Structure probing data (DMS and 2A3) for a 207-nucleotide construct. For DMS, 2,225 sequencing reads were counted. The reactions ran in a buffer of 150 mM KOAc, 10 mM MgCl2 and 150 mM bicine (pH 8.5), at 24 C.
[RMDB]
RNA sequence: GGGAACGACUCGAGUAGAGUCGAAAAGGAUGUCCUGACCGGAGGCCGACAAUCCAGGGAACCGGAUGUCAUCACGUUGUUGCAGUACCAGAUGGCAUCUUAAAUCCGAUCUGCAAAUAAGCAUGUAAAAACCGGCAUACGUUCGCGUAUGCCGGAAGUAAAUCUUGAAGUUCGCUUCAAGAUUUACAAAAGAAACAACAACAACAAC
Reactivity to DMS in 0.01 (KOAc 150mM, MgCl2 10mM, bicine 150mM(pH8.5), 24C), signal-to-noise 1, nucleotides 027 to 156: g000g040a050u010g000u000c030c000u010g000a070c030c000g000g040a070g050g000c030c020g010a130c070a120a250u000c030c010a120g010g000g000a050a080c130c130g000g000a060u000g010u000c000a010u000c000a290c250g000u000u000g010u000u020g030c040a110g000u010a110c030c040a190g010a030u000g000g020c000a000u000c010u020u000a010a050a130u000c070c000g020a040u000c000u040g080c090a080a030a100u000a050a090g020c080a030u010g000u010a080a070a100a110a140c000c000g000g020c000a000u000a030c000g020u000u000c300g070c040g030u000a010u010g010c000c000g000g010a000a020
Reactivity to 2A3 in 0.01 (KOAc 150mM, MgCl2 10mM, bicine 150mM(pH8.5), 24C), signal-to-noise 2, nucleotides 027 to 156: g050g000a070u020g030u070c000c010u000g070a070c000c080g040g000a000g050g010c020c030g030a070c030a070a080u040c000c040a010g010g020g010a070a050c020c040g000g010a010u040g030u000c000a000u000c030a010c170g050u050u040g060u070u020g030c080a040g030u130a050c040c040a070g000a020u000g000g020c000a000u000c010u000u050a040a070a000u000c040c000g030a060u030c030u000g030c000a020a040a190u190a130a040g060c080a060u200g000u300a000a080a090a050a040c000c010g000g000c000a000u010a000c000g040u010u100c250g000c000g090u010a000u000g000c000c000g000g000a000a000